[RMDB]
RNA sequence: GGGAACGACUCGAGUAGAGUCGAAAAGGGUUUGAGCCAUCGCCCGAAUAAGAUGGAUGAUACAAGUCGGCAUUGUACGCGACGUAGUACGUACUCAUUAGUGCGAAAGCACGGUUAGUCCGACUAGGCAGGGACGAUCUUCUGUCAAUACUUAGAAAAUACGGGUGAGCUUCGGCUCACCCGUAUUAAAAGAAACAACAACAACAAC
Reactivity to 2A3 in 0.01 (KOAc 150mM, MgCl2 10mM, bicine 150mM(pH8.5), 24C), signal-to-noise 2, nucleotides 027 to 156: g160g020g030u050u060u130g080a010g080c010c000a000u010c010g030c010c000c000g040a140a100u220a080a010g000a000u000g020g030a040u030g030a030u100a060c070a060a030g010u000c010g030g000c020a070u010u280g030u020a020c010g030c040g090a030c020g000u000a000g020u060a040c000g010u000a020c000u020c070a060u040u080a080g000u000g000c010g110a080a020a000g000c010a020c000g000g020u070u090a020g050u100c040c010g010a000c040u060a020g050g000c000a000g070g000g000a030c120g020a070u040c030u110u020c000u010g010u000c000a000a080u210a160c050u050u150a050g070a020a130
Reactivity to DMS in 0.01 (KOAc 150mM, MgCl2 10mM, bicine 150mM(pH8.5), 24C), signal-to-noise 1, nucleotides 027 to 156: g000g060g000u000u000u000g010a140g010c000c020a030u000c020g000c010c040c040g020a090a130u000a030a090g000a090u000g000g010a080u000g060a120u000a050c040a020a060g040u000c020g000g000c000a230u000u000g000u000a040c000g010c000g000a100c140g020u020a090g080u000a020c010g000u000a040c000u010c190a100u010u010a060g030u000g060c010g000a130a100a190g020c010a000c000g020g060u010u000a160g010u000c000c010g010a100c000u000a090g000g030c060a060g010g000g000a060c050g000a150u000c070u000u000c040u000g010u010c010a060a110u010a140c110u000u000a160g000a190a130